[RMDB]
RNA sequence: GGGAACGACUCGAGUAGAGUCGAAAAGAACGGCAGAGAGCCGAGAAAUGAGACGAGGUAGAGGGCGCGCUCUACCAAAAGCUGUGUGUAAAAACGCACGUGUAGGCGCGGCUACACAUCUCAAGAACCGAUAGCAUCGAUUCGUCGAUGCUAUCGGAAAAGAAACAACAACAACAAC
Reactivity to DMS in 0.01 (KOAc 150mM, MgCl2 10mM, bicine 150mM(pH8.5), 24C), signal-to-noise 1, nucleotides 027 to 126: g030a070a220c050g000g020c000a230g000a140g000a210g000c000c000g060a060g030a040a130a140u010g000a030g000a010c130g020a170g020g040u000a020g000a230g010g000g010c040g000c000g000c000u100c010u000a000c000c080a010a030a170a140g010c300u010g060u000g000u000g000u000a000a070a040a150a100c060g010c010a000c040g080u030g050u040a000g000g020c000g030c000g050g030c030u000a040c000a020c070a030u000c050u000c020a100a050g000a130a060
Reactivity to 2A3 in 0.01 (KOAc 150mM, MgCl2 10mM, bicine 150mM(pH8.5), 24C), signal-to-noise 3, nucleotides 027 to 126: g030a070a020c020g030g000c090a020g090a040g010a010g270c000c010g000a030g030a010a130a050u150g000a000g010a010c110g020a070g090g000u060a000g040a090g090g160g080c030g000c000g000c000u120c020u040a000c000c000a050a020a000a020g140c150u070g000u000g000u000g050u150a090a080a000a000a000c000g070c000a000c030g130u180g000u080a000g000g000c000g000c000g000g000c000u030a000c000a000c000a020u040c000u010c030a000a000g090a050a040
Overview
Chemical mapping of a 177-nucleotide RNA with DMS and 2A3. Conditions: 150 mM KOAc, 10 mM MgCl2 and 150 mM bicine (pH 8.5), 24 C. The data come from the RNA Mapping Database (RMDB), library OK1LIB. For DMS the reverse transcriptase was MarathonRT. The 2A3 profile rests on 1,790 reads.